Source: RMDB library M2PK50, as collected in RNAgym. Structure probing data (2A3 and DMS) for a 177-nucleotide construct. For 2A3 the reverse transcriptase was SuperScript II with manganese. DMS adducts were read by reverse transcription with MarathonRT. The 2A3 profile rests on 5,760 reads. For DMS, 3,176 sequencing reads were counted. The RNA was probed in 150 mM KOAc, 10 mM MgCl2 and 150 mM bicine (pH 8.5) at 24 C.
[RMDB]
RNA sequence: GGGAACGACUCGAGUAGAGUCGAAAAGCUCGGCCUUUCGAGGCCGAGCAGACGCCGUUUGCCUAGGCUAUAGGCUAAUUUAAAACACAAGCUGAAACACAACUGCUGAACAUUUCGAUGUUCAGAAGUGAAAUACAUACUUCGGUAUGUAUUUCACAAAAGAAACAACAACAACAAC
Reactivity to 2A3 in 0.01 (KOAc 150mM, MgCl2 10mM, bicine 150mM(pH8.5), 24C), signal-to-noise 4, nucleotides 027 to 126: g000c000u010c000g030g040c020c020u090u050u070c170g080a020g000g020c010c040g010a000g000c000a000g000a010c070g040c000c000g010u000u060u040g010c000c000u010a020g010g020c090u120a090u020a110g000g000c000u000a010a030u040u120u110a080a090a030a010c110a030c050a070a050g060c050u100g090a070a100a010c030a000c010a160a080c050u120g010c000u000g030a000a000c010a010u050u070u120c190g100a020u010g010u000u010c000a010g010a050a010
Reactivity to DMS in 0.01 (KOAc 150mM, MgCl2 10mM, bicine 150mM(pH8.5), 24C), signal-to-noise 3, nucleotides 027 to 126: g000c000u000c000g020g020c000c010u000u000u010c130g020a030g020g040c000c000g030a010g020c000a020g010a110c100g000c000c020g020u000u000u000g000c000c000u000a030g010g000c040u020a080u000a010g000g000c010u010a020a030u010u000u000a070a070a090a110c150a050c130a050a060g010c080u000g000a120a050a040c100a070c090a060a080c070u000g000c000u000g000a010a010c000a030u000u000u000c160g010a020u000g000u000u000c000a000g000a050a070